RNA sequence: GGGAACGACUCGAGUAGAGUCGAAAAUCCCUUUCCCAUCGGAUCUGAACUCUGGUCUUGGUGGUCGUAAAAGGAGGAAAAGUAAUGCUGAAGCUGGCCUCACGGCGCUUGUAGUCUGCUAUAGAGCGAAGUAACAUGGGUUCGCCCAUGUUACUUCAAAAGAAACAACAACAACAAC
Reactivity to 2A3 in 0.01 (KOAc 150mM, MgCl2 10mM, bicine 150mM(pH8.5), 24C), signal-to-noise 1, nucleotides 027 to 126: u020c000c000c030u000u020u000c000c000c000a000u030c040g030g010a020u000c030u030g030a100a020c020u010c020u120g010g020u000c020u050u040g000g000u030g000g000u020c030g050u060a000a090a060a050g030g040a010g010g030a000a110a060a000g030u090a090a050u160g060c020u070g050a040a020g000c050u080g080g020c000c000u050c010a020c000g000g060c050g000c050u020u040g020u050a050g010u000c050u090g020c060u060a040u100a200g120a000g060c090
Reactivity to DMS in 0.01 (KOAc 150mM, MgCl2 10mM, bicine 150mM(pH8.5), 24C), signal-to-noise 2, nucleotides 027 to 126: u000c010c000c020u010u010u000c050c010c010a110u000c070g000g000a050u000c030u000g010a100a140c120u000c050u000g030g020u000c030u010u030g060g020u000g010g000u020c130g010u000a040a050a080a090g040g030a120g000g000a070a080a080a090g010u010a060a060u000g020c020u000g020a080a090g020c030u010g030g030c040c020u000c110a080c140g030g020c040g030c040u000u020g020u010a070g010u010c120u010g000c020u000a090u000a040g000a070g000c070
Chemical mapping of a 177-nucleotide RNA with 2A3 and DMS. The 2A3 profile rests on 1,129 reads. For 2A3 the reverse transcriptase was SuperScript II with manganese. Conditions: 150 mM KOAc, 10 mM MgCl2 and 150 mM bicine (pH 8.5), 24 C. It was measured as part of the RMDB library RFMREP. Values cover nucleotides 27 to 126. As a SHAPE reagent, 2A3 marks flexible, mostly unpaired nucleotides at the ribose 2'-OH.